[RMDB]
Overview
An RNA of 207 nucleotides, treated with 2A3 and read out base by base. For 2A3, 1,750 sequencing reads were counted. The RNA was probed in 150 mM KOAc, 10 mM MgCl2 and 150 mM bicine (pH 8.5) at 24 C.

RNA sequence: GGGAACGACUCGAGUAGAGUCGAAAAGGGGUCUCCGGGAGAUCGUGUAGAGCAUCGAUCGUACUGAAGCCUCCACGGUACGGGAGCUCUAUAACGAUCUUUGAUCGGAGACGGAGGCACCCAAACUCGAGGAACUCCUUCGGGAGUUCCUCGAGAACCACAAAUUAUCGUUCGCGAUAAUUUGUGGAAAAGAAACAACAACAACAAC
Reactivity to 2A3 in 0.01 (KOAc 150mM, MgCl2 10mM, bicine 150mM(pH8.5), 24C), signal-to-noise 1, nucleotides 027 to 156: g080g020g140g010u000c010u010c010c000g010g000g010a020g000a000u000c000g010u010g000u010a000g000a000g000c000a030u300c040g000a000u010c010g010u010a000c000u030g040a120a020g000c000c000u000c010c000a010c010g000g000u000a000c020g000g010g000a020g000c000u000c000u000a000u010a050a020c010g000a000u000c000u120u080u000g000a000u000c010g000g000a010g010a000c000g000g000a000g000g000c000a040c000c000c010a050a130a070c010u000c000g020a010g000g010a000a000c000u000c010c050u180u220c300g070g010g010a000g020u000u000c000c000u000c000g000a000g000a000a010